[RMDB]
An RNA of 177 nucleotides, treated with 2A3 and DMS and read out base by base. The DMS profile rests on 8,797 reads. The RNA was probed in 150 mM KOAc, 10 mM MgCl2 and 150 mM bicine (pH 8.5) at 24 C. It was measured as part of the RMDB library TTRDEL.
RNA sequence: GGGAACGACUCGAGUAGAGUCGAAAAGAUAUGGAAGAGACGCGAUAAGACGUGGUCGGAAACGACCAUACGUCUUUUGACGCGUUUUUUCCUAAGUCAAACCUCUCAUCCUUCGGGAUGAGAGGAAGGGAUAUAUCAUGUUCGCAUGAUAUAUCCCAAAAGAAACAACAACAACAAC
Reactivity to 2A3 in 0.01 (KOAc 150mM, MgCl2 10mM, bicine 150mM(pH8.5), 24C), signal-to-noise 4, nucleotides 027 to 126: g000a010u030a010u080g000g000a010a010g000a010g000a010c000g030c020g100a200u090a300a020g000a000c010g010u000g000g000u000c000g000g010a020a020a010c000g000a000c010c000a000u070a040c020g010u010c020u040u040u060u110g100a020c000g000c000g000u000u010u000u010u000u000c000c000u000a020a000g000u000c020a020a040a180c000c000u000c000u010c010a000u020c010c000u060u120c270g170g010g000a000u000g000a000g010a000g000g000a000a050
Reactivity to DMS in 0.01 (KOAc 150mM, MgCl2 10mM, bicine 150mM(pH8.5), 24C), signal-to-noise 5, nucleotides 027 to 126: g010a030u000a240u000g010g010a010a010g000a000g000a000c000g020c000g000a170u010a040a010g010a020c000g030u000g000g000u000c000g010g000a070a060a140c000g010a000c000c010a060u010a020c050g020u000c000u000u000u000u010g000a150c060g020c000g010u000u000u000u000u000u000c000c000u000a030a090g010u000c020a130a140a200c000c000u000c000u010c000a000u000c000c000u000u020c260g030g000g000a000u000g000a010g010a000g010g000a010a030